[RMDB]
RNA sequence: GGGAACGACUCGAGUAGAGUCGAAAACAAACAAAACACCUCCAAAGUCAAAAGGCGAAAGAAAACCGAGGAAAACUUCGGAAGAGUGUCUGCCAAAAAGACGGAGGAAACACUCUUAACAAACAAAAAUAAUCCGAUUAUUCGUAAUCGGAUUAUUAAAAGAAACAACAACAACAAC
Reactivity to 2A3 in 0.01 (KOAc 150mM, MgCl2 10mM, bicine 150mM(pH8.5), 24C), signal-to-noise 4, nucleotides 027 to 126: c000a010a050a000c050a030a130a010a000c080a050c010c000u010c010c020a200a180a060g060u060c020a030a040a070a140g010g000c010g050a120a080a060g080a010a060a080a000c000c000g000a020g000g030a080a080a090a210c030u060u030c010g030g020a050a020g010a010g060u070g050u020c050u130g010c030c000a000a140a010a010a000g030a010c020g010g000a000g000g000a000a010a000c000a000c000u030c010u080u080a080a050c050a140a060a010c050a040a070a090
Reactivity to DMS in 0.01 (KOAc 150mM, MgCl2 10mM, bicine 150mM(pH8.5), 24C), signal-to-noise 3, nucleotides 027 to 126: c020a080a240a110c060a070a060a080a150c110a190c010c030u000c020c010a140a090a190g020u010c130a050a140a140a090g010g000c000g000a050a110a130g000a040a060a150a160c010c010g020a030g020g000a270a030a140a140c030u000u000c000g030g000a010a020g000a040g010u000g030u000c020u030g010c010c010a000a080a130a110a130g020a040c140g020g020a080g000g020a110a140a040c110a010c020u000c030u030u000a080a150c140a060a050a060c110a010a070a020
This 177-nucleotide RNA was probed chemically with 2A3 and DMS. The RNA was probed in 150 mM KOAc, 10 mM MgCl2 and 150 mM bicine (pH 8.5) at 24 C. Values are in units of 0.01, from 0 to 300, in steps of 10. The 2A3 profile rests on 3,739 reads. For DMS, 2,934 sequencing reads were counted. Source: RMDB library OK1LIB, as collected in RNAgym. DMS adducts were read by reverse transcription with MarathonRT.